[RMDB]
RNA sequence: GGGAACGACUCGAGUAGAGUCGAAAAACACUUUGACAGAGAGCGGAUUCCUGAGAGAGUGGUACACGCAAAAGGAGCAGGUGCUUUUGGAUACUUUGAGGUCACCCACGAUAUCACCAGAUACUCCACCUGCACUGAUGUUCGCAUCAGUGCAGGUAAAAGAAACAACAACAACAAC
Reactivity to DMS in 0.01 (KOAc 150mM, MgCl2 10mM, bicine 150mM(pH8.5), 24C), signal-to-noise 2, nucleotides 027 to 126: a020c110a050c020u020u020u050g000a050c030a070g000a070g020a100g000c030g000g000a100u050u020c000c030u010g000a090g030a080g000a030g020u000g030g000u000a030c160a090c100g100c190a020a090a060a050g050g020a020g020c060a080g000g030u000g000c000u000u030u000u010g000g000a030u010a060c130u020u000u020g000a030g000g000u040c020a040c020c000c050a090c010g030a050u040a050u000c010a100c180c070a090g000a100u000a050c010u000c150c030
Reactivity to 2A3 in 0.01 (KOAc 150mM, MgCl2 10mM, bicine 150mM(pH8.5), 24C), signal-to-noise 3, nucleotides 027 to 126: a000c040a010c040u070u050u100g090a000c030a020g160a000g030a020g040c030g140g100a150u180u090c020c020u050g030a030g010a020g000a010g150u110g000g010u130a040c110a020c060g100c030a130a070a000a020g100g010a070g000c020a010g040g060u130g010c050u000u060u040u050g080g010a050u080a150c010u040u000u120g080a030g010g060u020c010a080c010c000c000a070c020g010a030u100a020u040c050a060c030c000a050g040a020u040a120c060u020c030c000